[RMDB]
RNA sequence: GGGAACGACUCGAGUAGAGUCGAAAAGAAAUUGGAUUCAAACGGAACACGGACAGAUAACACAGGGAGGCAGUCAGCGUGUACAGGCAGGCAAGCUUUCUACCUGGUCCAGGGUGAAAAUACCCACCGUCUGUUCACAAUGUGCUGAUGUGCAGGAGAGCAAAAUACCAUUCGUGGUAUUUUGCUCAAAAGAAACAACAACAACAAC
Reactivity to DMS in 0.01 (KOAc 150mM, MgCl2 10mM, bicine 150mM(pH8.5), 24C), signal-to-noise 1, nucleotides 027 to 156: g010a100a080a060u020u010g020g010a200u010u010c050a050a080a150c080g000g000a110a090c050a060c100g010g000a140c050a110g000a140u010a050a120c080a080c170a110g050g000g010a110g040g000c060a120g000u000c000a010g020c050g020u000g020u000a050c030a020g000g020c000a100g040g000c060a060a080g010c100u000u000u000c020u000a140c000c000u000g040g000u000c180c090a130g010g010g000u000g020a040a050a050a070u010a010c030c020c040a120c030c030g010u000c000u000g000u000u010c020a090c100a180a120u000g040u000g020c000u000g010a020u000g010u010g010c010a090g010g000a280
Reactivity to 2A3 in 0.01 (KOAc 150mM, MgCl2 10mM, bicine 150mM(pH8.5), 24C), signal-to-noise 3, nucleotides 027 to 156: g090a000a110a010u100u130g050g020a060u140u090c080a090a090a070c050g030g000a020a030c040a060c090g060g040a000c000a050g100a050u090a190a030c060a040c020a090g060g060g000a050g010g010c010a000g030u050c030a010g000c020g060u060g000u030a010c000a010g000g070c000a010g050g020c020a060a030g020c010u050u070u000c020u070a070c010c020u010g000g020u050c030c040a050g000g000g000u020g020a000a080a040a010u100a070c010c000c010a010c000c010g030u010c010u010g030u080u080c020a020c000a050a120u240g040u120g110c020u030g000a070u030g050u040g070c060a030g030g090a070
This 207-nucleotide RNA was probed chemically with DMS and 2A3. The RNA was probed in 150 mM KOAc, 10 mM MgCl2 and 150 mM bicine (pH 8.5) at 24 C. It was measured as part of the RMDB library OK3TST. For DMS the reverse transcriptase was MarathonRT. Values cover nucleotides 27 to 156.